Structure probing data (DMS and 2A3) for a 207-nucleotide construct.
The data come from the RNA Mapping Database (RMDB), library OK3TST.
The DMS profile rests on 1,510 reads.
The reactions ran in a buffer of 150 mM KOAc, 10 mM MgCl2 and 150 mM bicine (pH 8.5), at 24 C.
For DMS the reverse transcriptase was MarathonRT.
Values cover nucleotides 27 to 156.
[RMDB]
RNA sequence: GGGAACGACUCGAGUAGAGUCGAAAACACAAACCUUUGAGUUCAAUAUCUGAUGCAGCAAUCAAUUUAAUACCACUUUUGUGAAAAUAGCAAGAGCAUAUUUCUAUGCAGUAAGGUAAUAUCUGUUCUACAGGCUUGUGCUUUGGUUGAAUACAGAGUAUUACACCCGUUUCGACGGGUGUAAUACAAAAGAAACAACAACAACAAC
Reactivity to DMS in 0.01 (KOAc 150mM, MgCl2 10mM, bicine 150mM(pH8.5), 24C), signal-to-noise 1, nucleotides 027 to 156: c080a120c020a050a110a120c020c020u000u010u000g010a140g070u000u020c040a050a170u010a070u000c030u010g010a210u000g000c010a130g020c040a100a050u010c040a080a060u000u000u000a010a030u000a090c000c090a040c000u000u000u000u000g010u000g000a120a080a170a120u010a160g020c020a000a040g000a120g040c040a070u010a010u000u000u000c030u000a090u010g040c040a090g010u010a080a090g000g000u010a040a080u000a030u000c080u010g010u010u010c040u000a070c100a040g000g090c030u010u010g040u000g020c010u000u000u020g000g000u000u010g000a050a190u010a090c050a060g000a220
Reactivity to 2A3 in 0.01 (KOAc 150mM, MgCl2 10mM, bicine 150mM(pH8.5), 24C), signal-to-noise 2, nucleotides 027 to 156: c030a000c000a000a050a110c000c000u020u050u140g040a040g050u080u090c120a080a030u020a050u110c000u030g010a050u040g000c010a040g000c030a070a090u080c010a000a020u160u080u140a090a050u050a100c040c070a040c050u050u030u010u000g030u020g050a110a050a160a210u080a100g030c030a040a010g010a020g030c000a010u020a050u170u110u030c040u050a080u050g000c010a000g060u120a040a000g020g000u000a030a000u050a050u080c040u010g030u070u000c010u030a020c010a010g030g000c020u010u050g030u030g030c000u040u080u110g040g000u030u010g000a010a050u120a090c050a030g300a030